Chemical mapping of a 177-nucleotide RNA with DMS and 2A3.
[RMDB]
RNA sequence: GGGAACGACUCGAGUAGAGUCGAAAAAGCCCUGUUCGCGGGUGUCGACAUCUAGACCAUGCCCUUAGCUCCACGAGUAGGAAUGUCUGAAAGUGCAUUCUGAAUGGGUGAUAAGAUUCAUCCAAGGUAAACGGAGACCUUUCGAGGUCUCCGUUUAAAAAGAAACAACAACAACAAC
Reactivity to DMS in 0.01 (KOAc 150mM, MgCl2 10mM, bicine 150mM(pH8.5), 24C), signal-to-noise 2, nucleotides 027 to 126: a080g050c010c000c040u000g000u010u000c070g000c230g000g000g030u000g020u000c040g000a100c130a180u000c050u000a130g000a050c120c050a110u050g010c050c000c030u010u000a130g030c000u000c020c070a080c130g000a050g010u010a170g000g010a040a000u000g010u010c050u020g020a110a160a110g000u010g000c000a030u000u010c000u040g060a040a100u040g000g000g000u000g000a000u000a080a060g020a150u000u010c020a020u000c000c000a160a090g020g000
Reactivity to 2A3 in 0.01 (KOAc 150mM, MgCl2 10mM, bicine 150mM(pH8.5), 24C), signal-to-noise 2, nucleotides 027 to 126: a000g020c000c000c000u000g060u030u120c030g000c010g010g010g010u060g050u090c040g000a080c010a080u010c080u160a000g020a010c040c050a050u120g000c020c000c020u140u130a060g000c030u020c000c030a060c090g030a040g000u000a000g020g000a000a080u040g000u010c000u100g190a250a240a030g110u110g100c000a000u000u000c000u000g010a050a070u010g000g000g000u080g000a000u000a080a290g110a100u030u080c020a000u000c010c000a010a040g080g000
Reactivities are given for positions 27 through 126.